[RMDB]
RNA sequence: GGGAACGACUCGAGUAGAGUCGAAAACUGGUUGCGGCUGAGAACUCAUCCAUCACUUUUUCAAUGAGCAUUUCGUUGCUUUUGGACUGUAGUAACAUAGCUAUUCCCCUUUCGGCGAGACUUGGCGCACUUUAGGAGGGUUCGCCCUCCUAAAGUGAAAAGAAACAACAACAACAAC
Reactivity to 2A3 in 0.01 (KOAc 150mM, MgCl2 10mM, bicine 150mM(pH8.5), 24C), signal-to-noise 1, nucleotides 027 to 126: c030u030g040g040u030u080g000c030g000g050c030u020g050a010g050a150a010c030u000c050a050u000c040c000a060u020c030a040c020u090u070u020u090u050c050a150a020u180g000a070g030c030a030u030u100u280c140g090u120u030g050c020u060u070u030u030g050g000a050c000u020g030u060a050g040u020a080a040c030a080u100a050g010c010u070a050u020u050c030c000c000c010u000u030u110c040g000g010c000g040a020g080a070c010u080u050g060g010c020g000
Reactivity to DMS in 0.01 (KOAc 150mM, MgCl2 10mM, bicine 150mM(pH8.5), 24C), signal-to-noise 2, nucleotides 027 to 126: c080u010g000g020u000u000g010c060g000g010c050u000g030a110g000a100a080c090u010c020a040u000c050c040a130u000c080a070c100u000u000u010u010u000c060a060a080u010g020a030g010c040a040u000u000u010c180g010u010u000g000c040u010u000u010u000g010g000a040c110u010g000u010a060g000u000a040a050c100a070u000a040g020c060u000a180u000u000c020c010c010c160u000u010u000c110g000g010c090g010a110g000a080c090u000u010g010g000c100g000